[RMDB]
RNA sequence: GGGAACGACUCGAGUAGAGUCGAAAAGAUAUGGAGAGCCAAAGACAUGAGGCCCAGGUGAGGGAGAUCGGAAACGAUCUCCUACCCACCACCUGUGAGCCUCAACAGCUUUGGCUCUCCUAAGUCACUCGCAAGAUAAGUUCGCUUAUCUUGCGAGAAAAGAAACAACAACAACAAC
Reactivity to DMS in 0.01 (KOAc 150mM, MgCl2 10mM, bicine 150mM(pH8.5), 24C), signal-to-noise 1, nucleotides 027 to 126: g000a010u010a210u000g000g000a000g020a020g010c000c000a000a000a000g020a000c090a300u030g010a030g000g000c000c000c000a010g010g000u000g000a100g110g000g000a000g000a030u000c010g000g000a030a030a170c000g000a000u000c000u000c000c010u000a040c040c000c060a300c050c000a040c000c000u030g000u000g000a230g020c000c000u020c060a000a010c240a220g000c010u050u000u000g000g000c000u000c010u020c000c000u000a000a000g020u000c010a300
Chemical mapping of a 177-nucleotide RNA with DMS. Conditions: 150 mM KOAc, 10 mM MgCl2 and 150 mM bicine (pH 8.5), 24 C. For DMS, 677 sequencing reads were counted.